[RMDB]
RNA sequence: GGGAACGACUCGAGUAGAGUCGAAAAAGCACGACUGCUACGGCAGCCGUGCAUGCGCGGAUAAAUCGACGGAUUGAAAAGCGGCGAUAUUGCUAACCGCCUGACGCGCAUUCUCAAUUAGCGACAAAAAAGGGCCUUUGGUUCGCCAAAGGCCCAACUAGUGCACUAUCUUCGGAUAGUGCACUAGAAAAGAAACAACAACAACAAC
Reactivity to 2A3 in 0.01 (KOAc 150mM, MgCl2 10mM, bicine 150mM(pH8.5), 24C), signal-to-noise 1, nucleotides 027 to 156: a000g000c000a010c010g000a000c000u000g030c000u000a030c170g140g000c020a010g000c000c000g000u000g000c000a000u000g000c010g000c000g000g010a010u000a000a000a000u000c010g070a180c170g230g010a020u000u010g000a010a010a000a000g000c000g020g000c010g080a060u040a040u200u090g010c000u000a000a020c000c000g010c020c000u010g010a010c000g000c000g000c010a000u050u000c000u000c030a040a090u010u010a000g010c000g090a130c180a020a090a030a030a050a090g040g000g020c010c010u030u010u000g050g030u030u030c250g000c050c010a000a000a000g000g000c000c000c000a000a000
The record gives the reactivity of an RNA of 207 nucleotides to 2A3.
Conditions: 150 mM KOAc, 10 mM MgCl2 and 150 mM bicine (pH 8.5), 24 C.
Source: RMDB library M2RFPK, as collected in RNAgym.
Reactivities are given for positions 27 through 156.
For 2A3, 807 sequencing reads were counted.